This 177-nucleotide RNA was probed chemically with 2A3 and DMS. DMS adducts were read by reverse transcription with MarathonRT. Conditions: 150 mM KOAc, 10 mM MgCl2 and 150 mM bicine (pH 8.5), 24 C. Values are in units of 0.01, from 0 to 300, in steps of 10.

RNA sequence: GGGAACGACUCGAGUAGAGUCGAAAAGAUAUGGAGAUUUGGGAAGCAACAGCAGAGUCGGAAACGACUCUGACAUGCUUACCCACGGAUCUCCUAAGUCAAAGCUACGCAGUUCGCUGCGUAGCAACUAGUUAAUGCAGUUCGCUGCAUUAACUAGAAAAGAAACAACAACAACAAC
Reactivity to 2A3 in 0.01 (KOAc 150mM, MgCl2 10mM, bicine 150mM(pH8.5), 24C), signal-to-noise 6, nucleotides 027 to 126: g030a030u080a050u130g010g000a010g000a010u020u050u140g010g000g010a010a010g000c010a010a140c040a160g080c000a010g010a000g020u000c010g030g010a050a080a050c000g000a000c000u000c010u000g010a010c010a020u050g000c000u010u100a300c000c000c000a010c060g060g020a010u000c000u020c000c000u020a160a010g020u030c070a180a050a010g000c000u000a000c000g010c010a010g020u050u140c210g110c240u010g000c000g010u000a000g000c000a000a000
Reactivity to DMS in 0.01 (KOAc 150mM, MgCl2 10mM, bicine 150mM(pH8.5), 24C), signal-to-noise 8, nucleotides 027 to 126: g010a050u000a300u000g000g000a020g000a030u000u000u010g000g000g020a080a010g010c010a040a080c300a200g010c000a010g000a010g010u000c000g010g000a140a140a240c010g010a040c010u000c000u010g000a030c090a160u000g010c000u000u000a140c010c010c010a050c300g000g010a010u000c000u010c010c000u010a030a120g010u000c050a120a070a150g010c000u000a010c010g010c000a000g010u000u020c300g010c010u000g000c000g010u000a000g010c000a020a040